[RMDB]
RNA sequence: GGGAACGACUCGAGUAGAGUCGAAAAAGCCUAUGGAUUCGCACGAGAAGGACAUAAACAGCUCAGUAGUGGCACGCUCACAACCUGGUUAUACAUCAGUUGUGAUUAACCACUUACUGUUCUACAAUCCUACGUGACGAUUCGUCGUCACGUAGGAAAAAGAAACAACAACAACAAC
Reactivity to 2A3 in 0.01 (KOAc 150mM, MgCl2 10mM, bicine 150mM(pH8.5), 24C), signal-to-noise 3, nucleotides 027 to 126: a000g100c010c000u040a070u040g020g000a030u080u000c010g060c060a060c120g030a040g030a100a050g090g100a010c010a030u130a020a170a010c010a070g010c000u010c010a000g000u000a000g000u010g010g010c120a050c120g000c000u000c000a000c000a010a030c010c040u000g000g060u090u060a180u150a150c070a030u000c010a000g010u010u000g010u010g000a000u000u070a010a060c010c010a000c000u020u130a020c000u000g030u020u000c040u080a020c060a050a080
Reactivity to DMS in 0.01 (KOAc 150mM, MgCl2 10mM, bicine 150mM(pH8.5), 24C), signal-to-noise 2, nucleotides 027 to 126: a030g070c000c020u000a030u030g040g000a140u000u000c100g000c100a080c100g030a060g010a020a000g010g000a030c160a030u060a050a020a070c160a140g000c040u010c010a000g010u010a000g010u000g000g020c080a040c170g060c300u000c030a000c000a000a000c110c080u040g000g000u000u020a080u000a130c200a020u000c030a000g000u010u000g000u000g000a020u000u010a170a080c000c000a020c000u000u010a010c030u000g000u000u000c020u000a120c130a070a100
An RNA of 177 nucleotides, treated with 2A3 and DMS and read out base by base.
Conditions: 150 mM KOAc, 10 mM MgCl2 and 150 mM bicine (pH 8.5), 24 C.